[RMDB]
RNA sequence: GGGAACGACUCGAGUAGAGUCGAAAAAAGAGUUAGCAGAUCGUUAUGGUGUGGUGGCGAACUUUGUGCGCAAAGCCAUAACAGAAGUCAAAGAUGAAGAUAGCGCGGACAUGUUUACUGCUGCAUCUGUUAAGCAAAGAUUCGUCUUUGCUUAACAAAAAGAAACAACAACAACAAC
Reactivity to DMS in 0.01 (KOAc 150mM, MgCl2 10mM, bicine 150mM(pH8.5), 24C), signal-to-noise 9, nucleotides 027 to 126: a060a060g000a090g010u000u000a070g010c040a060g010a100u000c100g010u000u000a040u000g010g010u000g020u010g030g020u000g010g010c020g000a050a060c070u010u000u010g020u010g010c030g030c030a060a130a280g000c030c020a020u000a020a040c040a120g000a110a090g010u000c090a050a080a090g000a080u000g000a080a060g000a070u010a070g010c080g010c030g010g000a070c080a060u000g010u000u000u000a080c030u000g000c020u000g010c050a060u000c070
Reactivity to 2A3 in 0.01 (KOAc 150mM, MgCl2 10mM, bicine 150mM(pH8.5), 24C), signal-to-noise 7, nucleotides 027 to 126: a000a000g140a020g040u090u080a010g010c030a010g020a110u080c030g020u040u030a030u070g020g010u060g020u050g080g250u070g070g000c010g010a040a040c060u110u120u220g090u110g050c020g000c020a040a060a030g030c000c000a000u010a030a010c010a010g070a070a010g030u070c060a120a050a050g070a070u120g030a050a030g060a090u090a050g040c050g010c010g010g020a020c020a040u090g060u100u110u060a070c020u000g010c000u040g000c010a050u030c020